[RMDB]
RNA sequence: GGGAACGACUCGAGUAGAGUCGAAAAGAUAUGGAUCCUAAGUAGGGAGAAGGAUCUCGGAAACGAGAUCCCUUCUUUGAUCUACGAUGGGAUCCUAAGUCAAAAGAUCGUAGUUCGCUACGAUCAACUUAGUAUCGUUGUUCGCAACGAUACUAAGAAAAGAAACAACAACAACAAC
Reactivity to 2A3 in 0.01 (KOAc 150mM, MgCl2 10mM, bicine 150mM(pH8.5), 24C), signal-to-noise 4, nucleotides 027 to 126: g040a000u080a030u150g010g000a010u000c010c010u050a120a040g010u000a010g030g030g000a020g010a000a000g000g000a000u010c000u000c000g030g010a100a050a020c010g000a000g010a010u010c070c010c000u010u000c000u120u180u060g040a040u010c010u020a010c030g080a220u300g030g000g000a000u000c000c000u000a030a010g060u000c050a040a010a080a160g010a010u000c000g000u000a000g030u060u090c300g000c170u010a010c010g000a010u000c000a000a000
Reactivity to DMS in 0.01 (KOAc 150mM, MgCl2 10mM, bicine 150mM(pH8.5), 24C), signal-to-noise 6, nucleotides 027 to 126: g010a050u000a300u000g000g000a000u000c000c000u010a140a300g000u000a000g010g010g000a020g010a020a020g000g000a020u000c000u000c000g000g000a090a080a220c000g020a020g000a010u000c150c040c020u000u000c000u010u010u000g000a070u010c000u000a010c000g010a210u020g000g010g000a010u000c000c010u000a020a080g010u000c030a090a070a140a130g010a010u000c000g030u000a010g010u010u020c300g020c010u000a010c000g010a010u000c000a090a060
Conditions: 150 mM KOAc, 10 mM MgCl2 and 150 mM bicine (pH 8.5), 24 C. The record gives the reactivity of an RNA of 177 nucleotides to 2A3 and DMS. Reactivities are given for positions 27 through 126. Source: RMDB library TTRDES, as collected in RNAgym. DMS adducts were read by reverse transcription with MarathonRT.